[RMDB]
RNA sequence: GGGAACGACUCGAGUAGAGUCGAAAAAAAUAGUGCCUUACACACGCUAUUGGGUACCCAACGCGGAGGCGGUGACACCGACAUAGACAGUGACAUUUGCCCAUCAUUAUUGGAACGUUUAUGCACAGUAAUACCCCUGAUUCGUCAGGGGUAUUACAAAAGAAACAACAACAACAAC
Reactivity to DMS in 0.01 (KOAc 150mM, MgCl2 10mM, bicine 150mM(pH8.5), 24C), signal-to-noise 5, nucleotides 027 to 126: a060a020a010u010a030g010u000g010c050c020u000u010a120c230a140c300a130c030g000c010u000a040u000u000g000g000g010u010a130c030c010c020a070a110c160g000c070g020g000a120g010g020c040g010g010u020g010a130c060a070c040c030g010a150c070a070u000a070g010a040c070a080g030u000g010a080c040a050u000u010u010g020c020c020c040a110u000c110a080u010u000a140u000u010g000g010a090a090c110g000u000u000u000a040u020g010c140a120c160a120
Reactivity to 2A3 in 0.01 (KOAc 150mM, MgCl2 10mM, bicine 150mM(pH8.5), 24C), signal-to-noise 2, nucleotides 027 to 126: a000a000a000u050a000g010u030g020c000c030u070u140a040c030a020c030a000c040g000c020u010a000u070u040g000g070g000u130a090c030c010c020a020a060c070g050c030g060g070a030g040g000c040g000g020u020g010a020c020a020c000c010g030a000c010a060u030a020g060a000c020a020g000u010g000a010c020a000u020u080u140g000c000c050c010a040u100c030a040u040u220a100u100u150g140g000a080a040c060g030u000u060u040a060u070g040c030a020c000a100